The record gives the reactivity of an RNA of 177 nucleotides to 2A3 and DMS. Reactivities are given for positions 27 through 126. For 2A3, 26,182 sequencing reads were counted. The data come from the RNA Mapping Database (RMDB), library TTRDES. 2A3 adducts were read by reverse transcription with SuperScript II with manganese. For DMS the reverse transcriptase was MarathonRT.
[RMDB]
RNA sequence: GGGAACGACUCGAGUAGAGUCGAAAAGAUAUGGAAUCGCGGAACAUCGAUCUGACUGGAUCGGAAACGAUCUUCAGGGAGUUUACGAUUCCUAAGUCAAACAGCCUUCCCUUCGGGGAAGGCUGAACCUAUGUAAAUACUUCGGUAUUUACAUAGGAAAAGAAACAACAACAACAAC
Reactivity to 2A3 in 0.01 (KOAc 150mM, MgCl2 10mM, bicine 150mM(pH8.5), 24C), signal-to-noise 3, nucleotides 027 to 126: g000a000u020a000u060g000g010a020a000u010c030g000c260g300g040a010a010c010a050u300c040g010a010u000c010u000g010a020c080u060g030g000a000u000c000g000g000a000a000a000c000g000a000u000c000u010u000c010a010g000g000g010a020g000u000u010u010a010c000g000a010u000u000c000c000u000a000a000g010u000c000a040a070a180c010a030g000c000c000u010u010c020c000c000u020u080c300g100g000g000g000a000a000g030g000c000u000g010a000a000
Reactivity to DMS in 0.01 (KOAc 150mM, MgCl2 10mM, bicine 150mM(pH8.5), 24C), signal-to-noise 4, nucleotides 027 to 126: g000a010u000a010u010g000g000a020a000u000c000g000c040g000g020a010a010c010a300u010c260g010a040u000c010u000g000a030c300u020g000g000a010u000c000g020g000a000a010a020c000g010a010u000c000u000u000c020a010g010g000g010a010g020u000u000u000a060c000g010a020u000u000c000c000u000a000a080g000u000c010a110a150a300c020a010g000c000c000u000u010c000c000c000u000u020c260g030g000g000g000a000a000g000g000c000u000g010a020a070